[RMDB]
This 177-nucleotide RNA was probed chemically with DMS and 2A3.
DMS adducts were read by reverse transcription with MarathonRT.
The reactions ran in a buffer of 150 mM KOAc, 10 mM MgCl2 and 150 mM bicine (pH 8.5), at 24 C.

RNA sequence: GGGAACGACUCGAGUAGAGUCGAAAAACGGCGACAACGCUCUUUCGUGAGCGUUAAACAGAUGAGUCCGCGACCAUGGGUUGCCAUAAAAUUGAUCGCUGCUGGCGUAAUGUGCUCAGCCGCCAUGGUCCAGUAUACGUUUCGACGUAUACUGGACAAAAGAAACAACAACAACAAC
Reactivity to DMS in 0.01 (KOAc 150mM, MgCl2 10mM, bicine 150mM(pH8.5), 24C), signal-to-noise 4, nucleotides 027 to 126: a160c080g020g020c010g000a070c140a070a020c000g010c000u000c000u000u020u050c220g030u020g000a000g020c000g000u000u000a020a090a120c170a120g010a080u030g010a180g010u020c030c070g030c160g000a120c020c010a040u000g010g020g030u020u020g000c020c040a100u030a030a050a090a060u030u010g010a120u010c080g000c030u000g000c030u010g010g010c040g000u030a090a100u030g020u000g000c070u050c050a080g000c040c040g030c020c010a080u010g020
Reactivity to 2A3 in 0.01 (KOAc 150mM, MgCl2 10mM, bicine 150mM(pH8.5), 24C), signal-to-noise 9, nucleotides 027 to 126: a000c040g020g010c010g020a010c010a020a010c010g010c010u000c000u070u280u130c250g110u200g020a000g020c000g000u010u020a030a030a010c060a020g090a100u070g010a050g080u030c030c050g050c050g040a010c020c010a050u050g040g000g020u030u060g020c010c010a030u170a050a120a060a060u110u200g060a090u100c050g000c020u030g000c010u030g020g010c010g040u080a100a130u200g060u090g080c030u040c170a010g010c000c020g040c020c010a060u090g060